Description: The data come from the RNA Mapping Database (RMDB), library OK2TST. An RNA of 177 nucleotides, treated with DMS and 2A3 and read out base by base. For 2A3 the reverse transcriptase was SuperScript II with manganese. The 2A3 profile rests on 994 reads.
[RMDB]
RNA sequence: GGGAACGACUCGAGUAGAGUCGAAAACUUCAGUCACUUUGGCGUGAAUAUAAUCCAUAUUAGGAACUUUCCACUAACCAUCCACACGACAUGGCACAUUUGCAUACACAUAUAUUGCACAGUGAGCUCCUACAGCUUCAUUCGUGAAGCUGUAGGAAAAAGAAACAACAACAACAAC
Reactivity to DMS in 0.01 (KOAc 150mM, MgCl2 10mM, bicine 150mM(pH8.5), 24C), signal-to-noise 2, nucleotides 027 to 126: c130u000u000c030a080g000u000c070a090c110u000u010u010g020g040c090g000u000g040a080a030u010a080u010a150a060u010c020c010a110u000a150u020u010a120g050g010a020a170c140u000u000u020c050c000a070c090u000a080a120c020c020a050u000c030c020a060c030a070c140g030a070c050a010u000g030g000c000a070c080a040u010u000u000g020c010a050u020a080c080a040c080a040u000a090u000a080u010u000g000c010a040c120a070g010u030g000a060g040c100
Reactivity to 2A3 in 0.01 (KOAc 150mM, MgCl2 10mM, bicine 150mM(pH8.5), 24C), signal-to-noise 2, nucleotides 027 to 126: c010u070u090c020a000g050u020c000a020c100u040u090u150g020g020c060g050u090g020a060a020u110a030u020a090a110u030c030c000a070u060a140u150u280a100g010g040a040a070c060u080u040u040c010c010a010c090u030a010a120c020c020a040u090c040c030a010c000a000c040g120a020c000a080u100g040g000c000a010c020a060u030u040u090g000c020a020u050a100c040a000c040a140u080a030u020a040u250u110g000c050a010c000a070g030u020g060a040g010c010